[RMDB]
The record gives the reactivity of an RNA of 177 nucleotides to DMS and 2A3. For 2A3 the reverse transcriptase was SuperScript II with manganese. The data come from the RNA Mapping Database (RMDB), library TTRDEL. The RNA was probed in 150 mM KOAc, 10 mM MgCl2 and 150 mM bicine (pH 8.5) at 24 C. For DMS, 1,167 sequencing reads were counted.
RNA sequence: GGGAACGACUCGAGUAGAGUCGAAAAGAUAUGGAGCGUUGCUUUUGACGCUCGAAGGGUCGGAAACGACCCUAAGAGCGAUAAGCACCGCUCCUAAGUCAAAGAAGUUGUGUUCGCACAACUUCAAGUGUAACGAUACGUUCGCGUAUCGUUACACAAAAGAAACAACAACAACAAC
Reactivity to DMS in 0.01 (KOAc 150mM, MgCl2 10mM, bicine 150mM(pH8.5), 24C), signal-to-noise 2, nucleotides 027 to 126: g000a030u010a300u000g000g020a000g000c000g000u000u000g000c010u010u020u020u010g020a150c050g000c000u000c000g000a300a050g000g000g050u020c010g000g000a060a110a170c010g010a000c000c000c000u000a000a260g000a010g000c000g000a110u000a030a000g030c000a020c040c000g020c000u000c000c000u020a000a080g010u000c030a080a120a200g000a000a030g040u000u000g040u000g030u000u000c170g000c000a040c000a010a000c000u010u010c010a060a090
Reactivity to 2A3 in 0.01 (KOAc 150mM, MgCl2 10mM, bicine 150mM(pH8.5), 24C), signal-to-noise 1, nucleotides 027 to 126: g020a010u090a040u150g020g000a000g010c010g010u020u010g000c040u040u090u130u230g300a180c210g000c010u010c010g000a010a010g010g000g010u000c000g000g000a000a020a080c030g000a010c010c000c010u000a010a010g000a010g000c030g040a060u030a010a000g030c000a000c010c000g010c000u000c000c000u000a010a000g000u000c020a110a090a000g020a000a000g010u010u020g010u020g010u080u190c300g100c090a000c000a000a010c000u030u000c010a010a020